About this RNA: Chemical mapping of a 177-nucleotide RNA with 2A3. Source: RMDB library OK1LIB, as collected in RNAgym. For 2A3, 786 sequencing reads were counted. 2A3 adducts were read by reverse transcription with SuperScript II with manganese.
RNA sequence: GGGAACGACUCGAGUAGAGUCGAAAAUGAGGACGGCGGGAACGGGGGGAAGAGCGCGCAUCCAGAUUUACUCCCGGUCGCGGUGAAGGCAUGCGUGCUUCUGCCGUUGUCGACCAGCGGCGUAGGCGCGUCCGGUACGCUUCGGCGUACCGGACGCAAAAGAAACAACAACAACAAC
Reactivity to 2A3 in 0.01 (KOAc 150mM, MgCl2 10mM, bicine 150mM(pH8.5), 24C), signal-to-noise 2, nucleotides 027 to 126: u080g010a000g040g070a010c050g010g070c040g010g000g030a200a070c080g030g000g000g000g090g080a200a040g000a030g000c020g000c020g000c010a000u000c000c000a010g010a070u050u080u150a130c080u060c010c000c000g170g010u300c100g020c120g010g070u210g060a120a090g010g000c050a000u000g000c000g020u040g000c000u030u010c020u030g070c000c000g090u000u020g100u040c030g020a120c030c060a000g000c000g000g000c030g000u040a050g060g000c010